[RMDB]
RNA sequence: GGGAACGACUCGAGUAGAGUCGAAAAGCAACCUGAAGCUGGCGGCCGAGUACCCCAGCGUGUUCCGCUCGCUGCUGGGGAUUUCGUGGAUGUGGUUCUUUGGCGCGGUCUUCCUGUCGCAGUUCCCGUUCUAGACCAUGUUCGCAUGGUCUAGAACAAAAGAAACAACAACAACAAC
Reactivity to 2A3 in 0.01 (KOAc 150mM, MgCl2 10mM, bicine 150mM(pH8.5), 24C), signal-to-noise 8, nucleotides 027 to 126: g010c020a020a070c000c030u050g030a070a010g020c030u040g100g240c050g030g030c040c010g020a030g030u180a190c000c000c000c000a000g000c020g010u010g020u110u060c060c060g030c060u050c030g040c040u140g000c010u010g000g030g020g020a020u050u100u040c050g020u070g050g060a100u080g060u070g070g050u070u030c000u060u080u130g050g010c040g000c020g030g030u030c000u040u030c000c020u020g010u030c020g000c030a030g000u010u000c000c000c010
Reactivity to DMS in 0.01 (KOAc 150mM, MgCl2 10mM, bicine 150mM(pH8.5), 24C), signal-to-noise 2, nucleotides 027 to 126: g030c100a100a120c060c010u000g010a120a080g010c050u020g000g030c060g000g000c050c030g000a030g000u030a160c010c000c020c000a000g000c040g030u010g000u030u050c040c020g020c040u000c020g000c010u070g020c000u000g000g000g010g010a080u020u020u010c040g000u000g000g010a090u010g010u000g010g010u010u000c030u000u030u010g000g020c040g000c030g000g000u020c060u000u010c030c000u000g010u000c040g040c080a110g000u010u000c000c010c000